[RMDB]
RNA sequence: GGGAACGACUCGAGUAGAGUCGAAAAAUAAAGCACAUGAAGCACAUGAAGCACGGCAAGCAGUACAAGCACUACAAGCAGUACAAGCACAUGAAGCAGUAGAAGCAGCGGAAGCACAUGAAAAAAAACAUGAUUAAGGAUUCGUCCUUAAUCAUGUAAAAGAAACAACAACAACAAC
Reactivity to 2A3 in 0.01 (KOAc 150mM, MgCl2 10mM, bicine 150mM(pH8.5), 24C), signal-to-noise 5, nucleotides 027 to 126: a000u150a000a070a010g020c030a020c010a080u100g070a070a000g030c040a040c020a100u100g040a070a000g000c030a010c040g010g000c020a040a020g030c010a000g020u030a020c020a090a050g020c020a020c030u140a020c030a070a040g020c000a000g020u030a030c020a070a030g000c010a020c000a060u080g040a050a010g000c030a000g010u090a010g020a070a010g010c030a000g000c010g030g030a020a010g020c010a010c010a090u160g110a080a050a030a010a000a000a010
Reactivity to DMS in 0.01 (KOAc 150mM, MgCl2 10mM, bicine 150mM(pH8.5), 24C), signal-to-noise 6, nucleotides 027 to 126: a070u010a060a070a070g010c050a060c060a070u000g000a080a080g010c060a060c060a070u000g000a090a070g020c060a060c110g010g010c030a040a070g020c040a050g000u000a040c080a050a060g000c040a020c060u000a050c140a070a090g000c020a040g000u000a050c100a030a070g010c040a060c090a050u010g010a060a060g020c030a050g010u000a040g020a090a070g010c040a030g000c020g000g000a040a050g000c030a040c080a050u000g000a000a000a010a050a040a050a080